[RMDB]
Source information:
The record gives the reactivity of an RNA of 177 nucleotides to 2A3 and DMS. It was measured as part of the RMDB libraries RFM100 and RFMREP. Reactivities are rounded to 0.1 and cut off at 0 and 3. 2A3 adducts were read by reverse transcription with SuperScript II with manganese. The RNA was probed in 150 mM KOAc, 10 mM MgCl2 and 150 mM bicine (pH 8.5) at 24 C.
RNA sequence: GGGAACGACUCGAGUAGAGUCGAAAACGCUCGGCUUGAGAGCUGAAGAAGGACGUGCCAAGCUGCGAUAAGCCUCAGGGACCCGCACGGAGGGGAAGAACUGAGGAUUUCCGAAUGGGAAUCCCCAGAAGAGUCCUAUUUUCGAAUAGGACUCUUCAAAAGAAACAACAACAACAAC
Reactivity to 2A3 in 0.01 (KOAc 150mM, MgCl2 10mM, bicine 150mM(pH8.5), 24C), signal-to-noise 7, nucleotides 027 to 126: c050g020c020u010c010g080g030c090u180u140g120a120g010a020g140c020u040g020a050a050g030a030a040g030g000a000c020g010u020g020c030c010a030a010g000c010u020g010c020g050a060u010a070a010g010c000c000u010c010a000g010g000g040a040c000c010c000g030c030a040c160g030g030a080g010g000g000g010a040a030g010a020a010c040u010g010a020g010g000a000u000u000u000c000c000g060a110a080u180g030g010g010a020a060u030c000c000c000c000a010
Reactivity to DMS in 0.01 (KOAc 150mM, MgCl2 10mM, bicine 150mM(pH8.5), 24C), signal-to-noise 6, nucleotides 027 to 126: c200g000c050u010c020g000g000c060u010u020g010a120g020a060g000c020u000g000a080a090g010a170a110g000g020a070c020g000u010g010c010c020a060a110g000c020u010g010c050g000a060u000a040a100g010c000c000u000c020a040g000g000g010a070c030c020c010g010c070a080c300g000g000a090g000g010g000g010a060a080g000a180a190c040u000g010a030g000g010a010u010u010u010c010c000g000a120a110u040g010g000g000a050a090u010c010c000c030c080a090